[RMDB]
RNA sequence: GGGAACGACUCGAGUAGAGUCGAAAACGUCGUGAACUAGCGACAAUGCCGUAGCUCCAUCGUUAUCUAACCGAAACAUCGUGACUAGUCGUAGAAUAGAACCAGGAGAGGCCGCUGGCAAACAAAGACGGGCUGUCUGAUUCGUCGGACGGCCCGUAAAAGAAACAACAACAACAAC
Reactivity to 2A3 in 0.01 (KOAc 150mM, MgCl2 10mM, bicine 150mM(pH8.5), 24C), signal-to-noise 8, nucleotides 027 to 126: c040g010u020c010g000u020g080a120a080c050u030a070g010c000g020a010c020a020a040u070g010c000c000g010u020a030g010c000u010c010c000a070u040c030g030u030u050a070u060c040u050a050a080c020c010g060a080a040a040c040a070u080c030g060u050g060a040c020u040a040g050u060c040g050u040a020g040a070a050u080a060g040a050a030c030c010a020g030g040a080g010a040g030g030c000c010g000c020u020g010g000c000a050a040a020c040a020a110a000g110
Reactivity to DMS in 0.01 (KOAc 150mM, MgCl2 10mM, bicine 150mM(pH8.5), 24C), signal-to-noise 7, nucleotides 027 to 126: c150g010u010c020g030u020g000a130a080c120u020a090g010c040g000a030c040a120a120u020g000c030c000g000u020a080g000c020u000c030c010a100u020c070g010u010u020a070u030c040u010a080a120c110c040g010a070a080a100c070a060u010c030g020u020g000a090c020u010a050g020u010c040g000u010a050g000a080a090u010a050g000a080a110c030c050a050g010g010a080g010a070g000g030c010c020g000c030u000g000g000c090a060a080a070c130a060a070a080g000